[RMDB]
Chemical mapping of a 177-nucleotide RNA with 2A3 and DMS. The 2A3 profile rests on 1,809 reads.
RNA sequence: GGGAACGACUCGAGUAGAGUCGAAAAGAUAUGGAACUCACAGGGAGUUCCUCGGAAACGAGAAGAACGAAGAACUGUAGGUUCCUAAGUCAAAACCAACCUGGGUUCUUCGGAACCCAGGUUGGAAUCCAUCUAAAAUGUUCGCAUUUUAGAUGGAAAAAGAAACAACAACAACAAC
Reactivity to 2A3 in 0.01 (KOAc 150mM, MgCl2 10mM, bicine 150mM(pH8.5), 24C), signal-to-noise 1, nucleotides 027 to 126: g020a000u060a060u070g000g030a020a040c010u050c170a020c010a000g040g060g000a080g030u000u010c010c010u030c000g030g020a100a040a010c000g010a010g050a300a020g000a030a020c020g120a260a110g010a110a050c030u030g010u020a050g110g020u010u000c000c000u000a150a010g030u020c010a050a020a080a160c010c000a010a030c040c000u000g000g100g000u050u010c010u100u070c280g060g030a000a010c000c040c010a000g000g010u000u000g000g000a000a000
Reactivity to DMS in 0.01 (KOAc 150mM, MgCl2 10mM, bicine 150mM(pH8.5), 24C), signal-to-noise 2, nucleotides 027 to 126: g000a040u000a300u010g020g000a020a000c000u000c020a020c000a010g000g020g000a100g030u000u000c000c010u000c000g000g000a070a070a220c020g010a000g010a100a100g000a000a050c010g020a110a160g030a140a150c010u010g000u000a060g000g000u000u000c000c000u000a040a060g010u000c030a050a070a120a240c010c010a010a010c000c000u000g020g000g020u000u000c000u020u010c150g000g010a000a000c000c000c000a000g020g000u000u000g000g000a020a040

The RNA was probed in 150 mM KOAc, 10 mM MgCl2 and 150 mM bicine (pH 8.5) at 24 C. The DMS profile rests on 1,466 reads. Reactivities are given for positions 27 through 126. 2A3 adducts were read by reverse transcription with SuperScript II with manganese.